[RMDB]
RNA sequence: GGGAACGACUCGAGUAGAGUCGAAAAAUCAUUCAUUACCUGCCUUCCUAUUCAACUCCCCCUUCCUGUGUGGCGGUAUACGCACAGGUCCAUGCAAUGGACCAGUCCUGGAGCACACUGGCCAGCCGUUCUUAGACCCAUUCGUGGGUCUAAGAACAAAAGAAACAACAACAACAAC
Reactivity to DMS in 0.01 (KOAc 150mM, MgCl2 10mM, bicine 150mM(pH8.5), 24C), signal-to-noise 2, nucleotides 027 to 126: a060u000c070a060u000u000c080a060u000u010a070c040c000u000g020c030c050u000u000c020c030u000a120u020u000c080a050a160c060u000c000c010c040c020c040u000u010c020c000u010g010u000g030u000g000g090c100g020g020u020a070u000a060c030g000c030a050c050a080g020g020u010c010c020a020u000g020c160a130a090u000g000g000a040c010c020a060g000u000c020c040u000g040g000a090g030c060a050c100a040c060u010g000g000c040c060a080g040c100c090
The record gives the reactivity of an RNA of 177 nucleotides to DMS.
The reactions ran in a buffer of 150 mM KOAc, 10 mM MgCl2 and 150 mM bicine (pH 8.5), at 24 C.
For DMS, 1,256 sequencing reads were counted.